RNA sequence: GGGAACGACUCGAGUAGAGUCGAAAACGCCGGUCGAGGAUAGAGGAUGAUCUGGAGUUCUAUUCCGUGCGGCGCUCUCUCAAGGUGAUAGAAGAGGCCCACGUGGUCUUCCUGCUCAUCGAUGCACCGUCCUCUGAGAAUUCGUUCUCAGAGGACGAAAAGAAACAACAACAACAAC
Reactivity to DMS in 0.01 (KOAc 150mM, MgCl2 10mM, bicine 150mM(pH8.5), 24C), signal-to-noise 2, nucleotides 027 to 126: c100g010c030c040g010g050u000c020g000a080g010g000a060u010a060g010a050g000g010a130u000g010a080u000c060u040g000g010a200g000u010u000c050u000a040u000u010c010c010g030u010g000c060g010g010c010g000c000u000c060u000c020u020c060a170a110g020g020u020g010a060u010a070g030a130a110g000a010g000g020c020c000c000a090c210g020u010g020g010u000c020u000u000c020c000u010g000c160u000c000a030u000c020g010a160u000g000c150a100c190
Reactivity to 2A3 in 0.01 (KOAc 150mM, MgCl2 10mM, bicine 150mM(pH8.5), 24C), signal-to-noise 2, nucleotides 027 to 126: c010g040c020c010g040g160u050c010g010a060g090g010a010u030a010g070a010g160g010a140u130g020a070u100c060u160g090g070a100g050u080u060c000u080a080u050u000c000c030g000u030g080c050g010g000c020g080c000u040c000u000c000u010c000a030a150g060g010u080g020a040u100a090g090a170a040g000a050g000g020c010c040c010a070c100g060u260g040g000u000c000u040u050c010c000u040g010c020u010c000a080u000c020g040a070u140g020c000a020c050